[RMDB]
RNA sequence: GGGAACGACUCGAGUAGAGUCGAAAAACAACUCUGGGGAGAAAAGGGAGGAUCGGAUGGGAAGAGUAUAUCCUACGGGAAUCCUCCGGUUCCCGUCACGUCUAGCCCCUCCCCGCGUCUGUGGAAGCUUAUUAGGAAAGUUCGCUUUCCUAAUAAGAAAAGAAACAACAACAACAAC
Reactivity to DMS in 0.01 (KOAc 150mM, MgCl2 10mM, bicine 150mM(pH8.5), 24C), signal-to-noise 4, nucleotides 027 to 126: a040c050a080a040c060u010c050u000g030g020g000g020a030g000a070a060a100a210g010g000g010a190g000g000a020u010c140g040g000a050u000g000g000g010a050a090g000a070g000u000a040u010a090u000c000c010u000a110c130g020g000g010a040a050u000c100c020u010c030c270g010g000u000u000c000c000c000g020u010c020a070c110g000u000c040u000a110g000c030c000c000c000u010c000c000c010c020g010c260g000u000c100u010g000u010g000g000a110a130g010
Reactivity to 2A3 in 0.01 (KOAc 150mM, MgCl2 10mM, bicine 150mM(pH8.5), 24C), signal-to-noise 3, nucleotides 027 to 126: a000c030a030a010c040u060c130u190g030g000g020g000a020g040a050a200a060a020g030g010g000a020g040g000a060u200c120g010g010a010u020g010g000g010a010a010g020a010g100u000a010u030a030u030c000c000u030a070c190g050g000g010a040a000u020c000c020u000c010c030g010g010u020u010c000c000c000g000u010c030a160c030g030u010c010u040a160g040c010c000c000c000u000c000c010c010c000g020c020g010u000c090u060g010u030g040g060a050a020g020
An RNA of 177 nucleotides, treated with DMS and 2A3 and read out base by base. The 2A3 profile rests on 4,707 reads. For DMS the reverse transcriptase was MarathonRT. The reactions ran in a buffer of 150 mM KOAc, 10 mM MgCl2 and 150 mM bicine (pH 8.5), at 24 C. The DMS profile rests on 4,854 reads.